[RMDB]
Conditions: 150 mM KOAc, 10 mM MgCl2 and 150 mM bicine (pH 8.5), 24 C. An RNA of 207 nucleotides, treated with 2A3 and read out base by base.
RNA sequence: GGGAACGACUCGAGUAGAGUCGAAAAGAUGACGGGAAAAUAGCUGUGUCCGAGAGCGGGGCAUUUAAUUUCUUUCAACGGUGUAAUAAACCCCAGUUUGUUCUUUGCUGAAAGGAGUAAAGCGAUACCACCCAAAUCAACGCGUCGGGUGUGAAACGUAUAUCCACGUGUUCGCACGUGGAUAUACAAAAGAAACAACAACAACAAC
Reactivity to 2A3 in 0.01 (KOAc 150mM, MgCl2 10mM, bicine 150mM(pH8.5), 24C), signal-to-noise 3, nucleotides 027 to 156: g050a060u110g010a000c020g000g020g090a040a020a010a130u140a070g020c050u020g010u020g020u110c100c060g050a050g010a020g110c030g010g000g010g000c040a010u040u020u080a050a050u000u050u050c010u000u080u020c030a040a040c060g020g040u060g030u120a040a120u120a140a120a060c040c020c000c010a010g000u010u020u070g020u010u020c060u020u010u100g010c010u060g020a080a050a090g000g050a020g020u050a070a040a000g030c040g030a010u060a090c000c030a030c020c000c020a040a040a030u160c030a060a050c120g040c060g160u100c080g010g020g040u040g000u020g040a100a030a010c040